Structure probing data (DMS and 2A3) for a 177-nucleotide construct. For DMS the reverse transcriptase was MarathonRT. The DMS profile rests on 1,241 reads. Values cover nucleotides 27 to 126.
[RMDB]
RNA sequence: GGGAACGACUCGAGUAGAGUCGAAAAGGCAAUUGUGCGAGUGGCCCGCGUGGUGAGCGCAGAGUCAACGCUAACCGAUGAUGAACUCUUCGAGUUGCGCGCGCGCGAUGUCGUCGGGCAGCUGCUCCGAAUCGCACCUCUUCGGAGGUGCGAUUCGAAAAGAAACAACAACAACAAC
Reactivity to DMS in 0.01 (KOAc 150mM, MgCl2 10mM, bicine 150mM(pH8.5), 24C), signal-to-noise 1, nucleotides 027 to 126: g000g000c030a050a040u000u000g020u000g000c080g010a050g000u030g000g020c000c090c000g000c030g000u030g030g000u000g000a180g070c020g000c010a110g000a140g000u070c130a090a130c010g000c100u030a090a100c190c000g000a080u000g000a000u060g000a250a290c060u000c000u090u000c120g000a050g000u000u000g000c050g050c090g000c110g000c010g000c000g020a160u000g000u010c000g040u000c000g000g000g000c120a060g000c000u000g000c020u000c150
Reactivity to 2A3 in 0.01 (KOAc 150mM, MgCl2 10mM, bicine 150mM(pH8.5), 24C), signal-to-noise 3, nucleotides 027 to 126: g090g000c010a080a140u200u100g030u080g130c070g140a090g110u060g010g010c000c000c000g000c010g010u110g030g140u160g050a030g010c000g000c010a010g010a020g050u120c100a130a000c010g010c030u090a030a050c040c010g030a020u000g030a020u140g040a110a120c010u000c000u100u030c020g060a130g080u000u020g050c010g000c010g000c000g000c000g000c030g080a080u170g080u090c070g040u020c010g000g050g000c010a020g020c000u060g000c000u020c030